[RMDB]
RNA sequence: GGGAACGACUCGAGUAGAGUCGAAAACUACCUCUACAACAACGCGCAAGAAUUUUUCUUCGGGGAGGAGAGUGGGCGAUGAACCGUUUCGAACUGCGCAGGUUGGACUACAGCUUGUCCGAGGACCGACCCAGGUAUGCUUCGGCAUACCUGGGUCAAAAGAAACAACAACAACAAC
Reactivity to 2A3 in 0.01 (KOAc 150mM, MgCl2 10mM, bicine 150mM(pH8.5), 24C), signal-to-noise 2, nucleotides 027 to 126: c030u060a120c000c000u000c010u160a070c160a250a070c040a110a030c070g010c000g000c130a180a090g050a170a180u210u070u060u040u000c020u080u020c060g030g000g120g000a040g000g040a060g000a000g080u120g000g030g000c060g030a040u060g040a070a090c010c000g090u040u020u060c070g000a090a080c000u060g010c010g000c090a060g010g040u060u040g110g040a080c080u180a110c050a080g000c000u090u130g040u000c040c000g030a070g010g030a020c050c050
Conditions: 150 mM KOAc, 10 mM MgCl2 and 150 mM bicine (pH 8.5), 24 C. Structure probing data (2A3) for a 177-nucleotide construct.